Source: RMDB libraries RFM100 and RFMREP, as collected in RNAgym. Chemical mapping of a 177-nucleotide RNA with DMS and 2A3. As a SHAPE reagent, 2A3 marks flexible, mostly unpaired nucleotides at the ribose 2'-OH.
RNA sequence: GGGAACGACUCGAGUAGAGUCGAAAAGACUCACCGCGUCGUUGAGCGUCAGGCUACCGGGAGCGGCAGCGCUCAGCGGCAGAUCGGCAACCGCGCCGUCCAGCGAGGGAAGCAUCUGGCUAGUGGCACAUGACUGAGGUUUCGACCUCAGUCAUGUAAAAGAAACAACAACAACAAC
Reactivity to DMS in 0.01 (KOAc 150mM, MgCl2 10mM, bicine 150mM(pH8.5), 24C), signal-to-noise 3, nucleotides 027 to 126: g010a030c000u010c000a080c040c010g010c140g000u000c010g040u000u000g030a070g010c000g000u020c050a300g000g010c020u000a070c050c020g000g020g020a070g000c040g010g020c160a110g020c030g010c020u000c050a070g000c030g020g000c040a070g020a100u010c050g000g000c050a100a150c050c060g000c050g000c000c010g030u000c070c050a050g000c060g000a120g000g010g000a110a140g000c040a050u040c050u040g020g010c050u010a060g000u020g000g010c080
Reactivity to 2A3 in 0.01 (KOAc 150mM, MgCl2 10mM, bicine 150mM(pH8.5), 24C), signal-to-noise 5, nucleotides 027 to 126: g010a000c010u010c020a010c000c010g030c020g010u000c000g000u000u010g010a020g000c010g080u140c090a060g090g030c020u060a080c020c050g040g010g040a030g020c020g040g000c040a010g040c010g000c000u000c020a020g010c000g020g000c000a020g010a120u070c030g040g000c040a040a030c030c010g040c020g010c010c000g050u020c030c010a010g020c040g010a070g020g020g010a080a020g030c010a030u040c020u030g030g000c020u020a040g040u060g060g010c030
Description:
The reactions ran in a buffer of 150 mM KOAc, 10 mM MgCl2 and 150 mM bicine (pH 8.5), at 24 C.